Background
Structure probing data (2A3 and DMS) for a 177-nucleotide construct. Reactivities are given for positions 27 through 126. The RNA was probed in 150 mM KOAc, 10 mM MgCl2 and 150 mM bicine (pH 8.5) at 24 C. Source: RMDB library TTRDES, as collected in RNAgym.
RNA sequence: GGGAACGACUCGAGUAGAGUCGAAAAGAUAUGGACUAGGAUUAGCGAUAAGCUGGUAUCGGAAACGAUACCCAGCUUUUGACGCUAACCUAGUCCUAAGUCAAAUCGGCCAGUUCGCUGGCCGAAACUUACUAUGGGAGUUCGCUCCCAUAGUAAGAAAAGAAACAACAACAACAAC
Reactivity to 2A3 in 0.01 (KOAc 150mM, MgCl2 10mM, bicine 150mM(pH8.5), 24C), signal-to-noise 5, nucleotides 027 to 126: g010a000u010a010u060g000g000a000c010u000a000g000g040a290u030u010a010g010c060g130a200u030a300a000g000c000u000g010g000u000a000u000c000g000g000a030a000a000c010g000a000u010a000c050c010c000a000g000c000u020u010u030u180g200a110c060g000c000u000a000a000c000c000u000a000g000u000c000c010u000a010a000g000u010c000a000a000a160u050c000g000g000c000c010a010g020u080u110c270g060c180u000g000g020c020c000g000a000a000a000
Reactivity to DMS in 0.01 (KOAc 150mM, MgCl2 10mM, bicine 150mM(pH8.5), 24C), signal-to-noise 5, nucleotides 027 to 126: g000a010u000a050u010g000g000a020c000u000a010g000g000a250u000u000a000g020c010g020a100u010a000a010g020c000u000g000g000u000a000u000c000g010g000a020a020a030c000g010a020u000a000c220c080c090a000g010c000u000u000u000u010g020a210c090g020c000u000a010a010c000c000u000a000g000u000c000c000u000a000a040g000u000c010a080a150a170u010c010g010g010c010c000a020g020u000u010c250g030c000u000g000g010c000c000g010a010a020a110